Record summary
The record gives the reactivity of an RNA of 177 nucleotides to DMS and 2A3. The DMS profile rests on 1,517 reads. 2A3 adducts were read by reverse transcription with SuperScript II with manganese. The reactions ran in a buffer of 150 mM KOAc, 10 mM MgCl2 and 150 mM bicine (pH 8.5), at 24 C. For 2A3, 1,184 sequencing reads were counted. Values are in units of 0.01, from 0 to 300, in steps of 10.
RNA sequence: GGGAACGACUCGAGUAGAGUCGAAAAUUGUGUCCAAGUGCAAGAGAAUGGGGGGAGGCUUUGGAGGGAAGGAGACGAGGAGCUGCUUCAUCGCCGCGUACGUGGCCAUUGCCGCCCAGCACCUCCACCUAUUUGACCGUUUCGACGGUCAAAUAGGAAAAGAAACAACAACAACAAC
Reactivity to DMS in 0.01 (KOAc 150mM, MgCl2 10mM, bicine 150mM(pH8.5), 24C), signal-to-noise 2, nucleotides 027 to 126: u010u010g010u010g000u030c010c030a050a050g010u010g010c080a110a070g010a090g000a100a070u000g000g000g020g000g010g000a030g000g020c100u000u000u010g050g000a100g010g010g000a070a040g000g000a070g010a070c060g010a090g010g000a190g030c070u000g000c010u000u000c110a070u000c150g010c000c000g020c040g020u000a070c200g020u010g020g010c020c100a060u000u000g010c030c040g000c040c020c050a110g010c070a090c040c000u000c020c050a100
Reactivity to 2A3 in 0.01 (KOAc 150mM, MgCl2 10mM, bicine 150mM(pH8.5), 24C), signal-to-noise 1, nucleotides 027 to 126: u070u050g060u000g020u020c000c000a070a040g090u010g100c080a100a010g050a000g050a210a120u140g000g040g000g010g050g000a050g010g000c000u060u050u030g020g020a020g050g040g060a030a000g070g020a070g000a020c060g060a110g110g010a090g010c010u060g030c000u090u030c020a100u050c030g000c000c030g020c020g040u110a100c130g020u000g020g000c000c010a080u000u150g020c000c000g000c040c020c050a000g000c000a020c000c020u000c020c010a020